[RMDB]
RNA sequence: GGGAACGACUCGAGUAGAGUCGAAAAGAAAAAGCGGAAGUGGCGAAAUCGGUAGACGCAGUUGAUCAAAGAUCAACCGUAGAAAUACGUGCUGGUUCGAGUCCAGCCUUCCGCACCGAAUAAAAAAGUCAUGAGGAUGAUUCGUCAUCCUCAUGACAAAAGAAACAACAACAACAAC
Reactivity to DMS in 0.01 (KOAc 150mM, MgCl2 10mM, bicine 150mM(pH8.5), 24C), signal-to-noise 1, nucleotides 027 to 126: g010a020a150a120a190a100g020c000g000g000a020a020g000u010g020g000c000g020a020a000a000u000c080g010g000u010a000g000a270c000g010c010a150g010u000u010g010a000u000c020a100a160a210g010a010u000c030a020a000c000c000g040u000a000g000a090a060a070u010a000c000g000u000g010c040u000g000g050u000u000c000g000a300g000u000c000c000a000g010c000c000u000u000c000c000g020c030a050c020c070g000a060a150u070a000a000a010a030a070a020
Structure probing data (DMS) for a 177-nucleotide construct. The RNA was probed in 150 mM KOAc, 10 mM MgCl2 and 150 mM bicine (pH 8.5) at 24 C. For DMS the reverse transcriptase was MarathonRT.